This 207-nucleotide RNA was probed chemically with 2A3. Reactivities are given for positions 27 through 156.
RNA sequence: GGGAACGACUCGAGUAGAGUCGAAAAGGCUGUGUUGUGGCGGGGGCGAAACAGGAUCGACAAGGGUGUAAAGAUCGCUCUUUUACUCGGCAUGAUACCACCGUUAUCGGGUCAACAGGGUAGUUGCUAGGGGAACGGGUGUUCGCACCCGUUCCAAGAAACUGAAAUGCUUCGGCAUUUCAGUUUCAAAAGAAACAACAACAACAAC
Reactivity to 2A3 in 0.01 (KOAc 150mM, MgCl2 10mM, bicine 150mM(pH8.5), 24C), signal-to-noise 1, nucleotides 027 to 156: g160g000c100u070g030u030g070u130u060g040u000g090g000c110g010g000g000g010g000c040g070a030a030a000c060a040g080g100a100u040c030g090a030c060a120a070g000g010g060u010g010u100a060a110a000g040a120u150c050g000c100u020c000u020u100u000u090a030c050u050c010g060g000c030a000u090g030a000u020a040c000c000a010c000c000g030u000u030a000u140c030g000g000g000u010c000a000a030c040a050g000g070g070u100a040g020u000u030g050c010u030a040g160g000g000g000a000a000c000g000g040g000u000g020u060u070c200g040c030a000c000c000c000g000u000u000c000c000a030a000